[RMDB]
RNA sequence: GGGAACGACUCGAGUAGAGUCGAAAAAAAGAAAAGGCAAUGAAAACUGCCGUAACGAAGACGGGUGAAACGCGUGUGUGCUUUUAUUGCAAGAAGCCAGGGCACUUGCAACGCAACUGCCGCAAAAACUGAGGAUUUUAUUCGUAAAAUCCUCAGUAAAAGAAACAACAACAACAAC
Reactivity to DMS in 0.01 (KOAc 150mM, MgCl2 10mM, bicine 150mM(pH8.5), 24C), signal-to-noise 3, nucleotides 027 to 126: a070a040a070g000a060a060a180a090g010g020c020a040a030u000g000a080a030a140a100c130u000g010c000c010g020u010a070a060c100g010a080a080g010a070c080g020g000g010u010g000a090a110a080c150g000c110g010u000g020u010g030u010g020c060u010u000u010u000a100u030u010g000c050a030a070g010a040a090g010c100c080a070g010g010g000c060a080c040u000u000g000c000a050a060c160g000c040a010a060c030u000g010c010c010g030c080a060a060a060a060
Reactivity to 2A3 in 0.01 (KOAc 150mM, MgCl2 10mM, bicine 150mM(pH8.5), 24C), signal-to-noise 2, nucleotides 027 to 126: a000a000a000g110a030a100a020a040g010g020c050a050a030u130g090a200a110a020a010c060u030g010c030c010g010u000a040a000c040g070a030a010g100a030c040g000g040g010u090g010a070a120a040c070g000c000g020u060g010u010g020u040g050c030u030u100u080u160a120u190u070g020c020a030a070g080a080a010g090c050c040a040g030g050g000c000a000c000u020u060g000c020a050a020c010g020c000a000a040c070u080g040c000c040g070c060a070a110a040a010
Chemical mapping of a 177-nucleotide RNA with DMS and 2A3. The reactions ran in a buffer of 150 mM KOAc, 10 mM MgCl2 and 150 mM bicine (pH 8.5), at 24 C. For 2A3 the reverse transcriptase was SuperScript II with manganese. Source: RMDB library OK2TRN, as collected in RNAgym. Reactivities are given for positions 27 through 126.